[RMDB]
RNA sequence: GGGAACGACUCGAGUAGAGUCGAAAAGGUUCGAGGGCGUAGCUGACCCCAGCCCAUCCCAAGGUGUGGAGCGAGUGAAGAUAGUCCUGUGUGUGUUUCAGGGUGGCAUUGAUACGCGCAUUCGGGGAUUAUAUAAUCACUUCGGUGAUUAUAUAAUAAAAGAAACAACAACAACAAC
Reactivity to DMS in 0.01 (KOAc 150mM, MgCl2 10mM, bicine 150mM(pH8.5), 24C), signal-to-noise 9, nucleotides 027 to 126: g010g010u000u000c110g020a090g010g010g010c040g010u000a120g010c080u000g000a160c030c010c020c020a090g010c020c010c030a190u000c010c010c010a130a110g000g020u000g020u000g010g000a080g010c050g000a070g010u000g010a090a080g000a100u000a090g010u000c020c020u000g020u000g010u000g020u000g000u000u010u000c040a070g010g000g020u000g010g000c050a090u010u010g000a080u000a050c080g010c050g010c050a090u000u000c090g010g000g000g000
Reactivity to 2A3 in 0.01 (KOAc 150mM, MgCl2 10mM, bicine 150mM(pH8.5), 24C), signal-to-noise 4, nucleotides 027 to 126: g060g000u050u120c090g070a210g030g010g000c040g040u090a040g050c070u080g120a200c010c000c020c000a000g000c010c000c020a050u030c010c010c010a010a050g090g000u120g030u070g010g020a040g030c040g010a050g040u080g040a060a060g020a130u080a030g050u020c020c040u030g010u000g010u010g000u000g020u060u050u060c030a020g030g000g040u050g030g000c020a020u020u070g020a020u050a100c030g010c000g020c050a010u070u110c020g000g000g000g000